Structure probing data (2A3) for a 207-nucleotide construct. For 2A3, 2,770 sequencing reads were counted.
RNA sequence: GGGAACGACUCGAGUAGAGUCGAAAAGGGGUCAGUACUUUGAUCGCUCGCGAUUUGAUGACCCACACUGAAGCCUCCACGGUGUGGCAAGAAUCCGAGCGGGAGUACUGACGGAGGCACCCAAAGGAUCCAAGGGGAUUCGUCCCCUUGGAUCCAAUCAUAGCAUGGUGUUCGCACCAUGCUAUGAAAAAGAAACAACAACAACAAC
Reactivity to 2A3 in 0.01 (KOAc 150mM, MgCl2 10mM, bicine 150mM(pH8.5), 24C), signal-to-noise 2, nucleotides 027 to 156: g020g000g150g030u000c000a000g010u000a000c000u300u290u030g010a010u010c010g000c000u010c010g070c220g010a010u000u000u030g140a230u010g000a000c000c000c000a000c000a000c000u050g010a100a020g010c000c000u000c000c000a000c000g010g010u000g010u010g010g000c030a070a300g010a000a000u000c000c000g000a000g000c000g000g000g000a000g000u000a000c000u000g000a000c000g000g010a000g000g000c010a020c010c010c000a060a110a040g000g000a000u000c000c010a000a000g010g020g000g000a000u040u070c240g050u020c020c000c000c000u000u000g010g000a000u000c000c000a000a000

The RNA was probed in 150 mM KOAc, 10 mM MgCl2 and 150 mM bicine (pH 8.5) at 24 C. Reactivities are rounded to 0.1 and cut off at 0 and 3.